[RMDB]
RNA sequence: GGGAACGACUCGAGUAGAGUCGAAAAGCAAGAUGCUUCGGCAUCUUGCAGUCGUAGCGCGAUGGACAGAAUUACAGCUAUGUCGAACGAGGAAGAGCGCGCACAUCAUCCCUUUCGAGGGAUGAAACCCUCUUAAUCGAUUCGUCGAUUAAGAGGGAAAAGAAACAACAACAACAAC
Reactivity to DMS in 0.01 (KOAc 150mM, MgCl2 10mM, bicine 150mM(pH8.5), 24C), signal-to-noise 7, nucleotides 027 to 126: g000c000a020a000g000a010u000g010c000u000u010c190g040g010c000a010u000c000u000u000g010c000a030g010u000c070g010u000a100g010c020g000c010g000a080u010g010g000a030c030a040g010a130a150u010u010a100c270a120g010c110u000a080u000g010u000c010g010a070a110c100g000a130g010g000a080a080g000a130g010c010g010c020g020c030a100c190a160u000c000a010u000c000c000c000u000u000u010c170g010a020g010g000g010a010u000g010a020a080a100
Reactivity to 2A3 in 0.01 (KOAc 150mM, MgCl2 10mM, bicine 150mM(pH8.5), 24C), signal-to-noise 7, nucleotides 027 to 126: g000c000a000a010g000a010u020g000c010u060u140c260g100g000c000a000u000c000u000u000g000c010a000g020u020c060g030u040a040g010c010g000c010g020a040u100g100g010a010c020a030g090a070a030u190u130a180c050a070g060c090u090a060u100g010u020c030g040a100a120c060g020a090g100g100a080a060g030a040g080c000g010c000g000c010a020c010a070u030c000a010u000c000c000c000u010u020u040c190g080a010g000g000g000a000u000g000a010a000a000
The record gives the reactivity of an RNA of 177 nucleotides to DMS and 2A3. The RNA was probed in 150 mM KOAc, 10 mM MgCl2 and 150 mM bicine (pH 8.5) at 24 C. For DMS the reverse transcriptase was MarathonRT. The DMS profile rests on 9,846 reads.